Description: Chemical mapping of a 177-nucleotide RNA with DMS and 2A3. It was measured as part of the RMDB library 15KREP. 2A3 is a SHAPE reagent: it acylates the 2'-hydroxyl of flexible nucleotides of all four kinds. For 2A3 the reverse transcriptase was SuperScript II with manganese.
[RMDB]
RNA sequence: GGGAACGACUCGAGUAGAGUCGAAAACUUACACUUGUGUUUCCGGAAGUGAAGAUGAUACUUUUAUUAUACACAUGUUUAGGUUUCAUGUGUACUUGCUAUUUUGGUGUCUUCUCUCUUUUGAACCCCUUCAAUACGUGUUCGCACGUAUUGAAGGAAAAGAAACAACAACAACAAC
Reactivity to DMS in 0.01 (KOAc 150mM, MgCl2 10mM, bicine 150mM(pH8.5), 24C), signal-to-noise 1, nucleotides 027 to 126: c040u000u010a070c170a080c200u000u010g020u010g000u000u000u000c020c070g010g010a020a000g020u000g000a090a040g000a060u000g010a030u000a010c020u000u010u000u000a030u000u000a130u010a010c000a010c000a010u000g000u000u000u020a140g000g010u000u000u000c000a030u000g020u000g010u000a020c130u000u010g040c260u000a070u000u000u000u000g020g010u000g020u010c010u000u000c000u000c040u000c010u000u000u000u000g000a080a140c200c060
Reactivity to 2A3 in 0.01 (KOAc 150mM, MgCl2 10mM, bicine 150mM(pH8.5), 24C), signal-to-noise 2, nucleotides 027 to 126: c010u060u100a070c060a050c070u120u120g060u020g000u100u060u000c030c000g000g020a010a000g000u000g080a110a030g000a010u030g000a000u010a010c000u000u150u060u060a080u070u080a030u020a000c000a000c000a000u000g030u040u090u110a190g010g050u070u080u030c010a000u010g010u000g000u000a030c030u070u080g080c010u050a060u070u060u040u100g010g000u000g000u010c000u020u010c010u000c000u040c000u000u000u000u060g080a080a080c010c000